[RMDB]
RNA sequence: GGGAACGACUCGAGUAGAGUCGAAAACCCACGACUUUCGAGUCGUGGGAAAUAUAAUCAGCGGUAAAUAAUUAGCUCCGCUUACCGCUGAAGCGGAGCUUACACGUCUAGGAUUCGUCCUAGACAAGAUUGUGGAUUGAUUCGUCAAUCCACAAUCAAAAGAAACAACAACAACAAC
Reactivity to DMS in 0.01 (KOAc 150mM, MgCl2 10mM, bicine 150mM(pH8.5), 24C), signal-to-noise 2, nucleotides 027 to 126: c000c000c010a030c000g010a010c000u000u000u000c160g020a020g020u000c000g030u000g000g010g000a010a020a050u020a070u030a110a120u000c020a020g010c000g030g010u010a050a050a050u010a020a030u010u010a150g010c010u000c000c010g010c000u000u000a050c050c030g000c010u000g000a020a010g000c020g020g000a010g010c020u000u000a040c170a070c170g000u010c000u000a000g000g010a040u000u010c180g010u010c000c000u010a020g000a000c000a040a080
Reactivity to 2A3 in 0.01 (KOAc 150mM, MgCl2 10mM, bicine 150mM(pH8.5), 24C), signal-to-noise 4, nucleotides 027 to 126: c000c000c010a000c000g010a000c000u080u100u220c240g080a000g010u000c000g000u000g000g010g020a010a080a000u280a020u060a050a150u020c000a000g020c000g180g240u240a030a070a080u090a030a110u130u090a050g010c000u000c000c000g010c000u000u030a110c010c000g000c020u010g000a000a000g000c010g020g000a000g010c000u010u030a020c080a010c100g000u000c000u010a000g000g000a020u020u050c150g030u000c030c000u000a010g000a000c000a000a010
Notes: The record gives the reactivity of an RNA of 177 nucleotides to DMS and 2A3. It was measured as part of the RMDB library M2PK50. For DMS the reverse transcriptase was MarathonRT. Reactivities are given for positions 27 through 126. The reactions ran in a buffer of 150 mM KOAc, 10 mM MgCl2 and 150 mM bicine (pH 8.5), at 24 C.